[RMDB]
RNA sequence: GGGAACGACUCGAGUAGAGUCGAAAAAAAAGAUAUGGACCCUGAACUACGAUCGAAACAGGCGUUGAAAGAAACUCGGAAACGAGUUUCUGGAGCCUGAAGUAGAUCGCAGGGUCCUAAGUCAAAAUCAAUGAAUUAUGUUCGCAUAAUUCAUUGAAAAAGAAACAACAACAACAAC
Reactivity to 2A3 in 0.01 (KOAc 150mM, MgCl2 10mM, bicine 150mM(pH8.5), 24C), signal-to-noise 2, nucleotides 027 to 126: a020a000a020a040g040a030u070a040u080g000g010a000c010c000c010u010g010a100a020c090u180a040c300g000a020u000c000g000a020a010a000c000a000g030g010c050g270u300u050g000a030a020a000g010a010a000a000c010u000c010g040g030a000a040a030c000g000a010g000u020u000u000c000u000g000g000a000g010c000c000u000g010a000a000g000u010a000g000a000u000c000g000c000a000g010g000g000u000c010c000u000a000a010g000u000c000a030a020a000a270
Reactivity to DMS in 0.01 (KOAc 150mM, MgCl2 10mM, bicine 150mM(pH8.5), 24C), signal-to-noise 4, nucleotides 027 to 126: a060a080a090a110g000a040u000a300u000g010g010a010c000c000c000u000g020a090a080c140u010a300c030g020a010u000c000g000a210a200a220c010a000g000g020c000g010u000u020g000a200a130a030g000a020a000a000c010u000c010g010g000a090a050a140c000g000a000g010u000u000u000c010u000g000g000a060g020c000c000u010g000a000a030g000u000a090g000a020u000c000g010c010a010g000g020g010u000c000c000u010a000a070g010u000c030a050a080a120a120